[RMDB]
RNA sequence: GGGAACGACUCGAGUAGAGUCGAAAAACAUAAGCGCAAGUAGUUGAAUAGUGGAUUCAAGAAGCAAAACUUUACUACCGGUAAAAACAUUAGAACGAAAUAAAAGUGCUGAAUCUUAAAAGUAAAAGUAUACGUCAGCUUUCGAGCUGACGUAUACAAAAGAAACAACAACAACAAC
Reactivity to 2A3 in 0.01 (KOAc 150mM, MgCl2 10mM, bicine 150mM(pH8.5), 24C), signal-to-noise 2, nucleotides 027 to 126: a000c060a000u190a010a020g100c010g000c070a000a050g000u000a000g000u070u080g070a160a080u050a010g180u130g100g030a050u060u060c040a130a000g190a120a070g020c010a000a040a090a090c020u040u130u130a020c000u080a010c050c060g070g010u050a030a080a000a000a000c070a030u150u040a120g110a040a030c010g060a070a120a000u150a090a230a020a000g000u070g000c040u020g000a070a100u030c020u050u050a090a020a100a000g140u170a030a060a050a000
Reactivity to DMS in 0.01 (KOAc 150mM, MgCl2 10mM, bicine 150mM(pH8.5), 24C), signal-to-noise 1, nucleotides 027 to 126: a010c030a080u010a090a070g000c010g010c110a130a060g000u000a000g000u000u000g000a080a060u010a130g030u020g000g000a070u010u000c000a020a150g000a130a010g030c070a030a140a090a160c010u040u010u010a090c020u000a170c020c060g020g000u010a000a000a040a090a090c050a040u020u000a030g000a030a120c010g000a120a040a140u010a010a030a030a040g000u010g000c000u000g000a030a230u000c040u000u000a000a100a010a150g030u040a110a090a090a130
An RNA of 177 nucleotides, treated with 2A3 and DMS and read out base by base. For DMS, 1,443 sequencing reads were counted. The RNA was probed in 150 mM KOAc, 10 mM MgCl2 and 150 mM bicine (pH 8.5) at 24 C. For DMS the reverse transcriptase was MarathonRT.